[RMDB]
RNA sequence: GGGAACGACUCGAGUAGAGUCGAAAACGGCGCGUAUCGUGCCGGCCAUCAGGCUUUCCGCCACAUUCGCUACCGCCUGAAAACUGGUGGCGCAGGCGCGGCUUACGCUAUAGGCAUCGGUAUGAACGUGAGGAGCUGGAUUCGUCCAGCUCCUCACAAAAGAAACAACAACAACAAC
Reactivity to 2A3 in 0.01 (KOAc 150mM, MgCl2 10mM, bicine 150mM(pH8.5), 24C), signal-to-noise 2, nucleotides 027 to 126: c030g100g000c000g050c000g030u050a020u160c010g010u020g060c000c000g000g000c000c000a050u010c000a010g110g000c050u000u030u000c000c000g000c020c010a120c000a180u160u130c040g000c020u010a040c010c050g080c020c030u100g030a110a000a010a010c000u030g020g000u000g000g000c020g000c130a160g000g000c030g010c000g000g000c010u020u050a020c030g010c010u030a050u120a120g060g000c040a030u160c080g020g000u090a050u110g090a080a070c110
The record gives the reactivity of an RNA of 177 nucleotides to 2A3. Values are in units of 0.01, from 0 to 300, in steps of 10. Reactivities are given for positions 27 through 126. For 2A3, 1,093 sequencing reads were counted. The reactions ran in a buffer of 150 mM KOAc, 10 mM MgCl2 and 150 mM bicine (pH 8.5), at 24 C.